An RNA of 177 nucleotides, treated with 2A3 and DMS and read out base by base. 2A3 adducts were read by reverse transcription with SuperScript II with manganese. DMS adducts were read by reverse transcription with MarathonRT. The reactions ran in a buffer of 150 mM KOAc, 10 mM MgCl2 and 150 mM bicine (pH 8.5), at 24 C.
RNA sequence: GGGAACGACUCGAGUAGAGUCGAAAAGAAAGUGAUCGUGGGCUGCCUGUGCCCUGGUCAUUGAUAGUGCAGGGAAAGAAAUCGCGGAAAGUGCUUCCCCGUGUUUGGAGGGUCCGCUCCUGUCCCUUAACCAUUCCAUUUUCGAAUGGAAUGGUUAAAAAGAAACAACAACAACAAC
Reactivity to 2A3 in 0.01 (KOAc 150mM, MgCl2 10mM, bicine 150mM(pH8.5), 24C), signal-to-noise 9, nucleotides 027 to 126: g120a020a080a010g020u010g010a010u030c080g150u120g000g000g000c030u090g090c050c050u150g090u140g040c000c000c000u000g000g010u010c000a000u030u080g050a070u070a030g100u080g030c010a010g010g030g060a020a160a050g120a030a150a060u110c070g000c020g020g050a060a070a060g170u120g100c030u050u050c000c010c020c010g090u080g070u120u140u140g040g010a060g010g010g040u020c020c000g010c010u020c000c010u020g030u020c000c000c000u000
Reactivity to DMS in 0.01 (KOAc 150mM, MgCl2 10mM, bicine 150mM(pH8.5), 24C), signal-to-noise 7, nucleotides 027 to 126: g010a090a090a030g010u000g000a000u000c000g010u010g010g000g020c000u010g010c140c110u010g000u020g010c010c000c000u010g000g000u010c000a010u000u010g000a140u030a080g020u010g010c010a030g010g000g010a060a080a090g000a050a090a080u020c110g010c030g000g000a050a080a100g010u030g000c040u010u000c020c010c030c080g020u010g000u010u010u010g010g010a080g010g000g000u000c010c020g000c020u010c010c010u000g000u000c000c000c010u000